[RMDB]
RNA sequence: GGGAACGACUCGAGUAGAGUCGAAAACGAGGUGGACGCCGUGUUUGCGCGGCACCGUGACUACUACACGGCGCUGGCUGCCAGGGUCGACAAUCCCGGACCCUCCGAUUAUUCGCACUGCCUCGACGUCCGUAUUGGAAUUCGUUCCAAUACGGACAAAAGAAACAACAACAACAAC
Reactivity to 2A3 in 0.01 (KOAc 150mM, MgCl2 10mM, bicine 150mM(pH8.5), 24C), signal-to-noise 9, nucleotides 027 to 126: c030g000a010g020g010u030g020g060a100c070g040c080c030g050u070g040u050u170u180g050c160g000c010g050g030c030a030c050c000g000u010g040a090c050u120a040c020u050a040c130a000c000g010g000c020g000c030u040g100g010c030u040g010c010c020a010g000g000g010u020c010g040a120c060a090a100u050c000c000c000g000g010a010c010c010c000u040c030c020g100a150u120u110a100u190u270c030g000c010a020c050u020g000c000c000u020c010g030a070c070
Reactivity to DMS in 0.01 (KOAc 150mM, MgCl2 10mM, bicine 150mM(pH8.5), 24C), signal-to-noise 3, nucleotides 027 to 126: c020g010a070g010g010u000g020g000a090c150g010c090c090g010u010g010u000u000u030g020c030g030c030g000g030c010a040c040c040g000u000g020a140c120u010a110c160u020a140c000a000c000g030g010c020g000c030u000g000g000c080u020g000c070c130a040g000g040g000u000c010g000a060c130a110a150u010c000c020c010g000g000a040c000c010c000u000c190c000g000a120u030u010a110u030u010c080g020c050a130c030u000g000c000c000u000c000g010a180c180